[RMDB]
The record gives the reactivity of an RNA of 177 nucleotides to 2A3 and DMS. For DMS the reverse transcriptase was MarathonRT. High 2A3 reactivity points to a flexible backbone, as in loops and unpaired stretches. The 2A3 profile rests on 48,613 reads. The RNA was probed in 150 mM KOAc, 10 mM MgCl2 and 150 mM bicine (pH 8.5) at 24 C. It was measured as part of the RMDB library OK2TRN.

RNA sequence: GGGAACGACUCGAGUAGAGUCGAAAAAGGAUCGUACCAUGUGAGCACGAUCCAUGCAUGGUACCUAGUCUAUGUCUGCGUCGUACAGUACCUCAUGCUAGGCUGCGUACCUCGUACGCCAUGAGUACUUUUGCAUAUGAUUCGUCAUAUGCAAAAGAAAAGAAACAACAACAACAAC
Reactivity to 2A3 in 0.01 (KOAc 150mM, MgCl2 10mM, bicine 150mM(pH8.5), 24C), signal-to-noise 9, nucleotides 027 to 126: a010g030g000a030u030c020g000u010a030c020c040a160u230g170u130g220a130g040c040a000c060g010a020u000c010c000a010u090g020c010a010u030g000g010u030a020c000c020u030a030g040u020c030u060a050u120g060u000c070u070g080c050g100u090c040g050u130a130c030a090g040u070a030c020c020u020c010a020u070g010c020u040a030g050g010c040u050g000c040g000u020a010c000c100u080c110g020u020a020c040g010c020c010a040u050g030a020g050u070a070
Reactivity to DMS in 0.01 (KOAc 150mM, MgCl2 10mM, bicine 150mM(pH8.5), 24C), signal-to-noise 9, nucleotides 027 to 126: a080g010g010a020u000c040g030u000a020c010c020a290u010g020u010g010a110g040c040a020c030g000a030u000c020c010a050u010g010c050a040u000g000g010u000a090c010c040u000a040g010u000c040u010a030u000g010u010c060u000g010c230g010u000c110g010u010a100c180a080g010u010a040c110c050u000c040a030u000g010c090u000a040g010g010c080u010g000c130g010u000a020c020c140u000c240g010u000a020c060g010c010c040a040u000g000a060g000u000a100